An RNA of 177 nucleotides, treated with 2A3 and read out base by base.
[RMDB]
RNA sequence: GGGAACGACUCGAGUAGAGUCGAAAAGGAACGGAGAUUGCAAGGAGACGUAGAAAAUAAAGUAGGAGCAAAUGGAUUUUCUGCUUGGCGGUAUAGCACGUUUGAGUUUUUCAGUCGUGUCUAUGUUCAAUGAUCGGUGCUUCGGCACCGAUCAUUGAAAAGAAACAACAACAACAAC
Reactivity to 2A3 in 0.01 (KOAc 150mM, MgCl2 10mM, bicine 150mM(pH8.5), 24C), signal-to-noise 1, nucleotides 027 to 126: g030g020a010a000c030g010g000a060g000a080u050u090g030c030a020a020g100g000a040g040a000c030g030u080a000g110a060a070a020a000u170a040a040a020g080u080a000g150g000a000g080c000a000a110a100u100g010g000a070u120u050u050u000c000u050g030c030u020u010g050g000c040g000g010u000a030u060a070g010c000a000c000g000u000u160u000g050a040g030u140u100u020u300u020c000a010g000u030c000g000u020g000u000c000u010a030u020g040u000u000

Conditions: 150 mM KOAc, 10 mM MgCl2 and 150 mM bicine (pH 8.5), 24 C. For 2A3, 527 sequencing reads were counted.